[RMDB]
RNA sequence: GGGAACGACUCGAGUAGAGUCGAAAAUACCGCGUCUUCGGACGCGGUAAGAUCCCGUCGGAAAACCUGAGUGACGGAGAUGAAGAGACUCAAGCUACGCAAUGACUGCCGGAUUCGUCCGGCAGAACAUGUGUAUCAAAUUCGUUUGAUACACAUGAAAAGAAACAACAACAACAAC
Reactivity to 2A3 in 0.01 (KOAc 150mM, MgCl2 10mM, bicine 150mM(pH8.5), 24C), signal-to-noise 8, nucleotides 027 to 126: u020a000c000c000g020c000g010u000c010u040u060c180g100g000a010c000g010c000g000g000u000a000a000g000a010u000c010c030c010g010u050c030g070g060a070a070a070a100c010c030u060g040a070g060u060g030a060c040g040g020a110g010a090u100g050a070a070g040a010g020a060c010u020c070a060a020g020c020u100a050c080g010c100a040a160u150g070a110c010u000g000c000c000g000g000a010u040u040c100g060u000c030c000g000g000c000a000g000a000a000
Reactivity to DMS in 0.01 (KOAc 150mM, MgCl2 10mM, bicine 150mM(pH8.5), 24C), signal-to-noise 9, nucleotides 027 to 126: u000a010c000c000g030c010g020u000c000u000u020c200g010g020a020c000g030c000g000g010u000a000a030g010a110u000c010c000c000g020u000c080g010g000a100a060a080a070c050c050u010g000a080g010u000g010a090c060g010g010a090g000a080u000g010a080a090g000a120g010a050c040u000c040a060a090g000c040u000a070c100g010c150a070a080u000g010a190c000u000g000c000c010g010g000a030u000u010c190g000u000c000c000g010g010c000a000g000a040a120